[RMDB]
RNA sequence: GGGAACGACUCGAGUAGAGUCGAAAACCAAUGGGAAACCAUUGGCAACUCGGAAACGAGUUGAAGCGGGAAUUACGAUGCAAACCGCCGACAAUGCGAUUUUAAGCAUUGUCGAUUACGCCCAUGUCGAUUUUAAGACAUGGAGCGAAGCAUCGAAGCAUCGAUGUCCGUUCGCGGACGUUGAUGCAAAAGAAACAACAACAACAAC
Reactivity to DMS in 0.01 (KOAc 150mM, MgCl2 10mM, bicine 150mM(pH8.5), 24C), signal-to-noise 3, nucleotides 027 to 156: c000c000a010a010u000g020g000g010a180a110a110c000c000a020u000u000g000g020c030a010a010c040u020c010g020g020a140a150a230c000g020a090g030u000u000g010a090a120g010c000g000g000g010a150a170u000u010a090c020g020a020u000g030c000a110a150a120c020c010g000c020c000g000a040c010a020a020u000g010c000g000a230u020u000u010u000a170a300g010c020a010u010u010g020u000c000g000a040u010u000a060c010g010c000c000c000a020u000g010u000c000g000a300u010u010u010u000a080a170g010a020c010a010u010g010g010a050g020c000g020a080a090g020c010a010u000c000g000a090a220
Reactivity to 2A3 in 0.01 (KOAc 150mM, MgCl2 10mM, bicine 150mM(pH8.5), 24C), signal-to-noise 3, nucleotides 027 to 156: c000c000a000a000u000g010g000g000a040a010a000c000c000a000u000u000g000g000c010a000a000c000u000c000g000g010a060a060a030c000g000a000g000u000u000g020a030a000g000c000g000g000g010a060a000u060u050a060c000g000a000u000g000c010a010a000a040c000c000g000c000c000g000a000c000a000a000u000g010c010g100a120u030u050u060u280a080a020g000c000a000u000u000g000u000c000g000a000u000u010a010c000g000c000c000c000a000u000g000u000c010g010a080u030u040u040u240a070a010g000a000c000a000u000g000g000a030g000c000g000a010a010g000c000a000u000c000g000a020a010
An RNA of 207 nucleotides, treated with DMS and 2A3 and read out base by base. Values cover nucleotides 27 to 156. The RNA was probed in 150 mM KOAc, 10 mM MgCl2 and 150 mM bicine (pH 8.5) at 24 C. Source: RMDB library OK3TST, as collected in RNAgym. DMS adducts were read by reverse transcription with MarathonRT. For 2A3 the reverse transcriptase was SuperScript II with manganese.